[RMDB]
RNA sequence: GGGAACGACUCGAGUAGAGUCGAAAAGACUCGGGCACUUUCCUGAAGCCAGACCCCGUAUCGGGUGCCUACACAGCGCAGGAGUAUUACGAGUACGAUGAGAUCCUCAAGUUGCGACAAAAUGCCCGUCACGAUACUGAUUCGUCAGUAUCGUGACAAAAGAAACAACAACAACAAC
Reactivity to DMS in 0.01 (KOAc 150mM, MgCl2 10mM, bicine 150mM(pH8.5), 24C), signal-to-noise 2, nucleotides 027 to 126: g020a040c040u000c010g000g000g010c050a050c090u000u010u010c010c020u000g000a100a120g000c000c100a120g000a100c040c000c000c100g040u050a100u070c120g000g000g040u010g020c040c030u000a040c170a130c280a120g030c000g000c030a060g000g000a050g010u010a050u000u000a090c110g000a100g020u000a000c070g000a120u020g000a090g040a080u030c020c000u000c170a040a120g000u000u000g000c050g020a030c120a060a030a060a170u020g000c000c000c010
Reactivity to 2A3 in 0.01 (KOAc 150mM, MgCl2 10mM, bicine 150mM(pH8.5), 24C), signal-to-noise 3, nucleotides 027 to 126: g050a000c030u010c020g000g030g010c080a020c080u070u060u000c000c000u020g030a060a000g020c000c000a030g040a180c000c020c030c000g060u140a250u190c030g030g070g000u070g030c000c000u080a040c050a000c000a050g000c010g000c050a010g010g080a020g020u040a020u120u100a080c050g030a000g020u020a090c030g000a030u060g020a010g040a150u030c030c030u040c020a000a010g080u080u100g070c030g040a050c060a030a160a070a060u170g000c030c000c000
The record gives the reactivity of an RNA of 177 nucleotides to DMS and 2A3.
For 2A3, 1,490 sequencing reads were counted.